The data come from the RNA Mapping Database (RMDB), library TTRDEL. The record gives the reactivity of an RNA of 177 nucleotides to 2A3 and DMS. Reactivities are rounded to 0.1 and cut off at 0 and 3.
[RMDB]
RNA sequence: GGGAACGACUCGAGUAGAGUCGAAAAGAUAUGGAGCUUAAUCGCUUGGAUUUAGGAAGUAUAUCGGAAACGAUAUACGCUUGUCAGCGGAUAAGCUCCUAAGUCAAAACGUCCGUUCGCGGACGAAUCAGCAUGAGUAGUUCGCUACUCAUGCUGAAAAAGAAACAACAACAACAAC
Reactivity to 2A3 in 0.01 (KOAc 150mM, MgCl2 10mM, bicine 150mM(pH8.5), 24C), signal-to-noise 2, nucleotides 027 to 126: g020a000u060a020u170g000g010a000g010c010u040u000a020a000u080c010g030c080u120u290g120g030a180u300u250u280a060g040g070a220a160g020u000a000u020a000u010c000g020g000a090a040a000c020g000a000u000a000u010a000c000g040c000u020u020g110u100c050a020g000c000g050g000a000u010a040a000g000c010u000c000c000u000a010a010g000u020c010a030a010a080a090c030g010u010c030c010g000u100u090c300g020c020g060g010a000c010g040a010a070
Reactivity to DMS in 0.01 (KOAc 150mM, MgCl2 10mM, bicine 150mM(pH8.5), 24C), signal-to-noise 2, nucleotides 027 to 126: g000a080u000a300u000g020g000a000g010c000u000u000a020a010u000c010g020c000u000u030g010g020a030u000u000u000a020g000g020a060a140g020u000a010u000a020u000c000g030g010a100a090a250c000g000a000u000a000u020a000c020g000c030u010u010g010u000c000a060g000c070g050g000a050u000a010a000g020c010u000c000c000u000a000a040g000u020c020a140a040a110a180c030g010u000c000c000g030u000u010c240g040c010g020g000a010c000g000a040a120
Reactivities are given for positions 27 through 126. Conditions: 150 mM KOAc, 10 mM MgCl2 and 150 mM bicine (pH 8.5), 24 C.